RNA sequence: GGGAACGACUCGAGUAGAGUCGAAAAGUUUGUUUAUUUCUGACCCCGCAAGAAAUAUAAAUCUCAGCAUCUUUUUUAAAUCUUGCCACAAGAAUAGCAAUAUACUUCGUCAACAGUUUUUGACAUAGACCACUAGUAUGUUCGCAUACUAGUGGUCAAAAGAAACAACAACAACAAC
Reactivity to 2A3 in 0.01 (KOAc 150mM, MgCl2 10mM, bicine 150mM(pH8.5), 24C), signal-to-noise 4, nucleotides 027 to 126: g010u060u080u070g030u020u160u070a080u010u070u000c030u020g110a130c000c000c010c040g020c020a000a020g050a030a120a000u100a020u030a040a140a120u090c090u050c050a050g050c010a110u100c080u080u080u030u000u030u160a060a100a060u050c030u040u050g020c020c010a080c020a090a030g030a080a110u040a080g040c060a160a000u060a020u060a170c050u090u070c060g020u030c020a090a050c050a280g040u050u070u040u090u030g040a030c010a020u050a080
Reactivity to DMS in 0.01 (KOAc 150mM, MgCl2 10mM, bicine 150mM(pH8.5), 24C), signal-to-noise 1, nucleotides 027 to 126: g000u000u000u000g000u000u000u000a060u020u000u000c000u060g000a120c000c040c000c030g030c180a060a050g000a000a020a120u000a060u000a070a100a060u040c010u020c100a080g000c140a080u000c010u000u000u000u000u000u170a000a170a160u000c020u000u000g000c000c070a060c090a080a070g000a060a080u000a080g060c070a010a070u000a080u000a090c070u000u000c150g000u000c000a070a010c240a100g020u000u010u040u010u050g000a090c010a150u020a130
This 177-nucleotide RNA was probed chemically with 2A3 and DMS. The RNA was probed in 150 mM KOAc, 10 mM MgCl2 and 150 mM bicine (pH 8.5) at 24 C. 2A3 adducts were read by reverse transcription with SuperScript II with manganese. For DMS, 1,465 sequencing reads were counted.